The record gives the reactivity of an RNA of 207 nucleotides to 2A3. The reactions ran in a buffer of 150 mM KOAc, 10 mM MgCl2 and 150 mM bicine (pH 8.5), at 24 C. The data come from the RNA Mapping Database (RMDB), library M2RFPK.
RNA sequence: GGGAACGACUCGAGUAGAGUCGAAAAGUUGAGAGCGUUUAACUUAAGUCUUUUUUCUUAGCUUAAAAAAACUAUAUACAAGUGGUGGUAGUCCGCCACUCUAAGGGGACGCCUUUAGAAGAAGAGGGAAAGGCACUAAGCUUCGGCUUAGUGCCAACAGCACAUCAAUGUUCGCAUUGAUGUGCUGAAAAGAAACAACAACAACAAC
Reactivity to 2A3 in 0.01 (KOAc 150mM, MgCl2 10mM, bicine 150mM(pH8.5), 24C), signal-to-noise 2, nucleotides 027 to 156: g040u040u080g040a020g010a040g010c060g020u050u100u140a110a080c050u070u030a090a100g120u150c040u090u140u030u030u100u030c030u070u070a030g020c030u090u080a100a060a000a000a000a030a000c060u040a080u040a030u020a290c020a070a020g000u010g010g000u020g010g070u040a060g070u110c020c000g000c020c010a000c010u000c010u010a010a010g000g000g010g020a020c030g040c000c000u070u080u050a030g000a100a000g030a020a000g020a030g040g010g020a080a100a070g010g030c010a000c000u000a010a000g030c000u020u070c250g020g000c010u010u000a000g000u000g000c010c000a000a000